[RMDB]
The record gives the reactivity of an RNA of 177 nucleotides to DMS and 2A3. Conditions: 150 mM KOAc, 10 mM MgCl2 and 150 mM bicine (pH 8.5), 24 C. The 2A3 profile rests on 2,166 reads. The DMS profile rests on 3,027 reads.
RNA sequence: GGGAACGACUCGAGUAGAGUCGAAAAACUGAAGAUGUGCUAAACUAUGUUAAAUAUAAUGGAAACAAAGCACUUUCAAACUUAGGCUUUGAACCUUAUUUUGAGGAACGUGAAUUUAACCCAAUCAUACUGAUGCAGAUUUCGAUCUGCAUCAGUAAAAAGAAACAACAACAACAAC
Reactivity to DMS in 0.01 (KOAc 150mM, MgCl2 10mM, bicine 150mM(pH8.5), 24C), signal-to-noise 2, nucleotides 027 to 126: a090c050u060g000a080a060g020a080u030g000u000g020c030u010a070a080a150c130u000a010u040g010u010u040a070a090a120u020a070u070a030a120u010g010g000a080a070a030c090a060a050a010g000c020a020c070u010u020u020c050a010a070a060c140u000u030a050g000g000c060u010u020u060g020a070a100c000c000u000u000a060u000u000u050u030g000a010g020g000a040a140c120g000u010g060a030a070u000u030u000a100a080c000c000c020a050a140u030c200a060
Reactivity to 2A3 in 0.01 (KOAc 150mM, MgCl2 10mM, bicine 150mM(pH8.5), 24C), signal-to-noise 3, nucleotides 027 to 126: a000c070u140g010a090a020g080a170u090g030u000g040c020u110a130a050a050c020u060a130u130g090u160u170a040a170a060u270a110u100a150a180u200g060g000a150a000a000c020a060a060a000g000c000a000c000u020u150u030c030a050a050a030c020u050u100a020g030g000c080u070u030u300g060a090a060c010c000u020u020a030u010u110u040u070g080a050g020g020a080a010c030g080u070g070a100a090u010u100u080a070a000c020c000c000a000a080u070c060a040